This 207-nucleotide RNA was probed chemically with 2A3. Reactivities are given for positions 27 through 156.
RNA sequence: GGGAACGACUCGAGUAGAGUCGAAAAGAAGGAGCUCUCGAGCGCUCUCCCGCUCCUCGGAUGGGCCGUUGCCGGCGAACGAGCCCGAAGUGCGAGUGGGGGAGAACUCCCGAGAGUUGGGAGACAGAAAGAGAGCGAAUGUCCUCGGGAGGAUCCCGUAUGCAAAUCCGUUCGCGGAUUUGCAUACAAAAGAAACAACAACAACAAC
Reactivity to 2A3 in 0.01 (KOAc 150mM, MgCl2 10mM, bicine 150mM(pH8.5), 24C), signal-to-noise 1, nucleotides 027 to 156: g100a030a010g000g030a030g020c010u020c010u020c010g090a100g090c090g050c010u000c000u000c010c010c000g000c000u000c040c000u000c020g100g000a070u090g120g000g020c000c000g040u010u010g080c090c060g150g050c090g010a010a010c000g030a070g000c000c020c000g000a000a000g010u020g070c170g010a000g000u000g000g000g000g010g000a010g000a000a000c010u000c040c000c000g100a150g000a000g170u300u230g010g010g000a020g000a020c030a050g170a070a080a000g060a010g000a000g000c010g020a000a040u010g010u040c000c010u000c000g010g010g010a120g030g010a040u050c030c020c000